[RMDB]
RNA sequence: GGGAACGACUCGAGUAGAGUCGAAAAAGCAAAAACUCUUCAUGGCAUGACCAACAAAAGACUAUAUGAGACCCCUGCUAGAUGUAUCAGCAAGAUUUGCUUGUCAUACUUUGGGGACUAUGCAGAACAGACAGUGACCAUCUUAAGGGACAUGCCCAAUCCAUGGUUACUUCGGUAACCAUGGAUUAAAAGAAACAACAACAACAAC
Reactivity to 2A3 in 0.01 (KOAc 150mM, MgCl2 10mM, bicine 150mM(pH8.5), 24C), signal-to-noise 1, nucleotides 027 to 156: a020g240c230a220a140a040a020a010c010u130c000u270u150c100a110u170g000g010c000a000u010g010a100c020c020a040a060c020a040a300a000a020g080a100c040u110a070u110a170u130g070a060g040a060c010c020c000c000u010g060c040u060a000g000a060u020g060u110a040u120c020a020g040c020a040a090g010a300u180u170u060g020c040u000u050g000u000c010a020u010a140c080u130u070u060g000g000g020g000a000c010u010a000u160g080c070a010g060a150a010c000a020g200a010c000a040g000u000g120a110c010c010a000u000c000u060u060a020a090g000g000g040a070c000a000u020g010c000c000c040

Structure probing data (2A3) for a 207-nucleotide construct. The RNA was probed in 150 mM KOAc, 10 mM MgCl2 and 150 mM bicine (pH 8.5) at 24 C. Source: RMDB library OK3TST, as collected in RNAgym. For 2A3 the reverse transcriptase was SuperScript II with manganese.